[RMDB]
RNA sequence: GGGAACGACUCGAGUAGAGUCGAAAAACUCUAGUGAAUUCUGGCCAUGCACCAUGUGAAUAUCUAUCGGACAAUACGAACUGUGCUAGAGACUAUGUGGUGACAUAUCGACCCGGGAAGAUUACAAAUACUAGUCGUAAUUCGUUACGACUAGUAUAAAAGAAACAACAACAACAAC
Reactivity to 2A3 in 0.01 (KOAc 150mM, MgCl2 10mM, bicine 150mM(pH8.5), 24C), signal-to-noise 9, nucleotides 027 to 126: a000c030u030c010u050a070g040u030g190a100a090u120u010c020u070g030g000c010c010a030u030g000c000a020c000c010a030u040g040u030g150a120a040u080a050u130c020u030a040u120c040g050g040a030c060a100a090u150a160c070g090a100a050c070u060g020u080g070c000u020a020g000a000g020a070c030u030a030u070g020u030g030g040u040g040a070c010a020u100a030u100c080g050a130c020c010c000g010g030g010a060a040g050a080u130u100a060c040a040a130
Reactivity to DMS in 0.01 (KOAc 150mM, MgCl2 10mM, bicine 150mM(pH8.5), 24C), signal-to-noise 9, nucleotides 027 to 126: a080c020u000c020u020a070g010u010g000a120a110u010u010c040u010g000g020c060c050a030u010g000c020a030c020c010a030u010g000u020g000a080a070u020a070u000c030u010a050u020c080g000g000a060c070a060a100u030a110c180g010a090a100c130u000g010u010g000c030u010a040g000a090g010a140c100u020a040u010g030u000g000g010u010g000a080c080a040u010a070u020c070g000a080c070c020c040g010g010g030a050a060g000a080u030u020a060c120a070a050